[RMDB]
Chemical mapping of a 207-nucleotide RNA with 2A3 and DMS. The 2A3 profile rests on 2,751 reads. For 2A3 the reverse transcriptase was SuperScript II with manganese. For DMS the reverse transcriptase was MarathonRT.
RNA sequence: GGGAACGACUCGAGUAGAGUCGAAAACGAUCUGUUCGCAGAUCGAGCUACGGAGACGUAGCAAAGAGCGUGAGGAGCCGCACACGCUCCAAACAAGAAAUAAGGCCCUAUCCAGCCAGCCGAGGAUAGGUGCGGCUCCGAAGAAACCGGCUGGCAACAGUAGUAAUACUUUCGAGUAUUACUACUGAAAAGAAACAACAACAACAAC
Reactivity to 2A3 in 0.01 (KOAc 150mM, MgCl2 10mM, bicine 150mM(pH8.5), 24C), signal-to-noise 3, nucleotides 027 to 156: c010g000a000u000c000u010g050u120u080c200g000c100a000g000a000u000c010g010a040g000c000u010a010c000g000g030a080g020a070c010g000u010a010g000c000a010a010a030g000a000g000c010g010u020g030a100g010g010a000g050c000c000g030c020a040c000a000c010g030c000u020c030c010a050a170a070c080a040a040g150a150a120a020u190a080a070g120g020c030c000c000u010a030u020c020c010a010g010c000c000a000g010c000c010g040a090g030g020a050u040a050g000g040u010g000c000g000g010c000u000c020c020g050a080a050g040a040a070a020c030c000g010g010c000u000g000g010c010a030a010
Reactivity to DMS in 0.01 (KOAc 150mM, MgCl2 10mM, bicine 150mM(pH8.5), 24C), signal-to-noise 2, nucleotides 027 to 156: c000g040a000u000c000u020g010u000u010c300g030c000a090g000a030u010c000g000a060g010c020u010a010c000g030g020a300g000a250c010g040u000a020g000c020a040a130a040g000a080g000c010g020u000g010a110g030g010a030g010c010c000g030c010a090c000a060c040g030c020u000c000c030a030a110a120c040a090a090g010a120a090a130u000a120a130g020g010c030c080c010u010a060u010c030c040a110g000c010c020a040g010c000c000g020a110g000g010a070u000a000g000g000u000g020c020g060g010c000u020c010c040g000a090a130g000a140a110a080c080c010g010g020c000u010g010g040c040a030a050